[RMDB]
This 207-nucleotide RNA was probed chemically with 2A3. Conditions: 150 mM KOAc, 10 mM MgCl2 and 150 mM bicine (pH 8.5), 24 C. For 2A3, 513 sequencing reads were counted. Source: RMDB library OK3TST, as collected in RNAgym. For 2A3 the reverse transcriptase was SuperScript II with manganese.

RNA sequence: GGGAACGACUCGAGUAGAGUCGAAAAUGUGUUGAGGAAUUCACAGCAACCACCACCAACAGGAAAGUUAUCAAAGCCACUUUUUCUAGUCCAAUCUUGUUGGCGGCAGAUAUGGUCCAGGCUAUUAACGGUACAACAAGUUUGAAAUUGGAUUUACGUGUCUAAUCAGGUUCGCCUGAUUAGACACAAAAGAAACAACAACAACAAC
Reactivity to 2A3 in 0.01 (KOAc 150mM, MgCl2 10mM, bicine 150mM(pH8.5), 24C), signal-to-noise 1, nucleotides 027 to 156: u100g040u020g000u010u030g040a050g090g060a170a130u210u090c010a000c030a160g000c030a070a030c000c000a030c010c040a040c000c030a060a050c020a080g000g040a050a030a010g040u110u080a070u160c080a020a100a020g060c010c060a080c120u000u020u070u080u040c100u060a060g010u000c020c020a030a020u040c030u000u070g000u030u040g020g040c020g010g000c100a010g020a250u060a020u060g000g010u050c100c090a120g110g030c020u040a010u080u030a080a010c030g060g050u110a050c020a020a000c010a020a000g000u000u020u300g120a120a110a090u010u010g030g050a010u140u150u060a090c070